[RMDB]
Conditions: 150 mM KOAc, 10 mM MgCl2 and 150 mM bicine (pH 8.5), 24 C. The record gives the reactivity of an RNA of 177 nucleotides to DMS and 2A3. DMS adducts were read by reverse transcription with MarathonRT. As a SHAPE reagent, 2A3 marks flexible, mostly unpaired nucleotides at the ribose 2'-OH. It was measured as part of the RMDB library OK2TST.
RNA sequence: GGGAACGACUCGAGUAGAGUCGAAAAGAUCGGUGCCGCGAGGGCACCUCCGGUGGCGGACAGCCGAUCAGCCCCGUUCUCCACCAGCACGGCAACAGCCACCUUGGGCGCUUGUGCGGGCGCAAAGCUAGUGCAGUCAUUUCGAUGACUGCACUAGAAAAGAAACAACAACAACAAC
Reactivity to DMS in 0.01 (KOAc 150mM, MgCl2 10mM, bicine 150mM(pH8.5), 24C), signal-to-noise 2, nucleotides 027 to 126: g010a020u010c010g010g010u000g010c000c020g020c080g000a260g040g000g020c100a070c070c050u000c050c130g000g050u000g010g000c020g020g000a060c090a210g020c000c010g010a020u000c070a170g010c000c010c010c020g020u010u000c010u000c010c030a140c110c070a040g010c040a070c050g010g010c010a160a100c170a190g000c010c010a080c130c150u010u000g000g000g030c060g020c020u010u000g000u000g010c030g000g000g040c120g010c100a050a080a130g000
Reactivity to 2A3 in 0.01 (KOAc 150mM, MgCl2 10mM, bicine 150mM(pH8.5), 24C), signal-to-noise 1, nucleotides 027 to 126: g020a000u020c020g000g050u060g000c020c010g010c040g090a080g050g130g080c140a100c000c000u020c000c000g040g030u040g150g000c000g060g000a130c050a070g040c010c000g000a030u000c000a010g050c000c000c000c000g000u020u000c030u000c020c000a020c000c010a040g000c000a020c090g020g020c010a070a040c030a210g040c000c000a050c050c000u050u030g110g020g020c000g030c000u200u250g010u030g030c010g020g030g000c000g020c040a060a060a030g060